[RMDB]
RNA sequence: GGGAACGACUCGAGUAGAGUCGAAAAGCGCCCUAGAGCGUCCCCAGCGCCGAGGGCCGGUGCCCGGCGUGCUAACCAUGCGUCUGCGGCCAAGGCCGAGCUCCGAGCGGCGUUAGCGCCCUCUGCGCUGUCCAAAGAUUUUCGAAUCUUUGGACAGAAAAGAAACAACAACAACAAC
Reactivity to DMS in 0.01 (KOAc 150mM, MgCl2 10mM, bicine 150mM(pH8.5), 24C), signal-to-noise 9, nucleotides 027 to 126: g020c070g000c010c010c130u030a120g000a120g000c000g010u000c030c000c000c060a070g000c000g000c000c070g010a010g000g010g030c010c010g010g010u030g020c000c000c000g010g010c000g010u010g010c040u010a100a140c240c220a300u020g000c010g000u020c020u030g060c130g010g010c010c050a130a070g000g000c000c010g000a080g000c030u020c090c110g000a080g010c010g010g000c010g010u010u010a080g010c090g010c000c000c000u000c000u000g000c010g000
Reactivity to 2A3 in 0.01 (KOAc 150mM, MgCl2 10mM, bicine 150mM(pH8.5), 24C), signal-to-noise 9, nucleotides 027 to 126: g010c010g030c000c000c010u050a070g070a020g030c010g020u080c010c000c000c000a010g000c000g000c000c030g000a010g000g010g000c000c020g060g070u190g010c000c000c000g000g010c000g000u040g010c020u050a080a070c050c020a080u160g000c010g030u060c090u160g060c160g020g000c010c020a070a060g090g000c000c000g010a020g010c020u050c070c100g060a070g050c020g020g000c040g030u050u080a050g010c030g000c080c000c000u000c000u010g000c000g000